[RMDB]
RNA sequence: GGGAACGACUCGAGUAGAGUCGAAAAUUCGCCUUAGAUGUAUCUGGGUGGCUGCUCCACUAAAGCCCGGGAAUAUGCAACCAGUUACAUUUGAGGCCAUUUGGGCUUAAGCGUAUUCCAUGGAAAGGCUGAUAUAUAGGUUCGCCUAUAUAUCAGCAAAAGAAACAACAACAACAAC
Reactivity to DMS in 0.01 (KOAc 150mM, MgCl2 10mM, bicine 150mM(pH8.5), 24C), signal-to-noise 3, nucleotides 027 to 126: u010u000c180g010c000c000u000u010a010g010a010u000g010u000a000u000c000u000g000g010g020u020g010g010c020u000g020c100u000c000c010a120c150u000a060a080a100g000c090c070c120g000g000g000a050a040u000a040u010g010c020a070a080c010c040a030g000u000u000a010c010a020u000u000u010g010a010g030g010c010c050a030u000u000u000g000g010g000c020u000u020a090a120g010c030g010u000a110u000u000c010c000a120u010g000g010a080a120a100g000
Reactivity to 2A3 in 0.01 (KOAc 150mM, MgCl2 10mM, bicine 150mM(pH8.5), 24C), signal-to-noise 4, nucleotides 027 to 126: u020u000c030g000c000c000u020u010a020g000a010u010g010u010a020u000c000u010g010g000g060u130g140g020c030u000g030c000u000c030c010a080c070u150a160a140a140g080c040c030c020g030g010g030a040a040u190a060u200g000c000a010a030c000c000a000g000u000u010a000c000a010u020u010u020g010a000g010g020c000c000a040u070u060u040g160g010g000c010u080u090a100a020g000c020g020u050a130u050u030c030c010a040u100g090g120a160a110a040g140